[RMDB]
RNA sequence: GGGAACGACUCGAGUAGAGUCGAAAAUCCUAAGUCGUCCCUUUGAUCAAUUAUCACAGUAACUACCCACCGCUAUCGGAAACGAUAGCGAGGUUAUCACAGUAAUUGGGAGGGACGAUAUGGAAAAACAGUUAGCAUGUUCGCAUGCUAACUGUAAUACCUAGCUAACUUUCGAGUUAGCUAGGUAAAAAGAAACAACAACAACAAC
Reactivity to DMS in 0.01 (KOAc 150mM, MgCl2 10mM, bicine 150mM(pH8.5), 24C), signal-to-noise 3, nucleotides 027 to 156: u000c010c000u000a040a170g020u000c000g040u000c000c000c020u000u000u010g010a170u000c020a060a070u000u000a030u000c040a240c200a150g010u000a010a070c010u000a030c020c020c010a300c190c000g020c000u000a000u000c000g010g010a170a170a240c010g030a020u000a000g020c020g010a020g040g010u000u000a010u000c010a220c210a120g010u000a010a020u000u000g010g020g000a050g040g040g000a030c010g010a000u000a050u000g010g030a060a030a090a120a040c000a020g020u000u000a010g020c000a010u000g000u000u010c300g020c010a020u000g000c000u000a000a010c010u000g010u000a030a110
Reactivity to 2A3 in 0.01 (KOAc 150mM, MgCl2 10mM, bicine 150mM(pH8.5), 24C), signal-to-noise 6, nucleotides 027 to 156: u020c010c000u020a100a040g020u000c010g000u020c010c020c030u090u080u060g190a140u120c030a020a010u030u010a060u200c050a030c040a130g030u020a040a020c050u060a050c050c050c060a090c020c030g010c000u000a000u000c000g070g030a150a050a030c010g000a000u000a000g000c000g000a010g000g000u000u010a040u090c030a020c030a070g020u000a000a000u010u000g010g010g010a010g000g000g000a000c000g000a000u000a000u020g010g020a000a090a050a040a010c000a000g010u000u000a000g000c000a000u010g020u070u100c300g020c170a000u000g000c000u000a000a000c000u000g000u000a000a000